[RMDB]
RNA sequence: GGGAACGACUCGAGUAGAGUCGAAAAGACGGAAAAGAUCGAACCUAAGAAGAUCAGGAAUUGUGAGCCGAAUCCUAGGGCUCCUAGGCACGCAUCGUCCGAUGCGAAAUAAACACUAACGUCGAAACAUGCUCGUGACCUUCGGGUCACGAGCAUGAAAAGAAACAACAACAACAAC
Reactivity to 2A3 in 0.01 (KOAc 150mM, MgCl2 10mM, bicine 150mM(pH8.5), 24C), signal-to-noise 1, nucleotides 027 to 126: g060a000c020g140g000a000a140a060a000g000a000u000c000g040a000a000c000c000u000a020a140g000a000a300g000a130u190c000a000g000g170a020a140u110u110g160u110g030a030g000c000c000g020a110a020u000c050c000u000a070g030g030g030c010u030c000c000u000a000g090g010c240a000c060g180c000a000u000c000g300u060c200c300g000a000u000g000c000g010a000a000a000u300a000a040a110c000a000c120u060a110a000c020g130u140c000g050a190a000a000